Source information:
This 177-nucleotide RNA was probed chemically with DMS and 2A3. Conditions: 150 mM KOAc, 10 mM MgCl2 and 150 mM bicine (pH 8.5), 24 C. 2A3 adducts were read by reverse transcription with SuperScript II with manganese.

RNA sequence: GGGAACGACUCGAGUAGAGUCGAAAAUAUAUGAAGACUUCAAACAAGGCAUUAUUGCGCUUAAAAAUAGAAUUUAUUUCACCGGACCAUUUCGCGAGCAAGGGAACUCUCCUUUAAUUUGGUUUUACCUUGAGUUCUAUUUCGAUAGAACUCAAGGAAAAGAAACAACAACAACAAC
Reactivity to DMS in 0.01 (KOAc 150mM, MgCl2 10mM, bicine 150mM(pH8.5), 24C), signal-to-noise 2, nucleotides 027 to 126: u030a080u080a070u030g010a030a050g010a080c040u010u020c080a090a070a110c140a070a060g020g000c020a050u000u010a030u030u010g020c040g010c040u010u010a020a050a050a090a120u050a030g030a050a090u030u000u010a060u030u000u000c040a060c060c010g000g020a070c020c020a030u000u000u030c060g040c070g000a050g010c040a050a110g000g020g000a040a070c060u030c060u010c010c020u000u020u030a030a060u010u010u010g010g000u000u000u000u020a080
Reactivity to 2A3 in 0.01 (KOAc 150mM, MgCl2 10mM, bicine 150mM(pH8.5), 24C), signal-to-noise 6, nucleotides 027 to 126: u140a000u060a030u080g080a030a050g080a060c050u060u030c090a040a190a150c030a030a060g040g020c020a030u050u100a090u180u230g030c130g060c020u080u090a010a060a020a070a010u100a060g080a050a050u080u120u040a110u040u160u100c030a060c050c020g060g000a020c000c000a030u050u050u030c060g000c020g030a010g000c030a040a040g040g020g040a040a040c010u010c020u060c030c000u030u130u090a160a100u120u090u080g040g000u000u010u000u110a060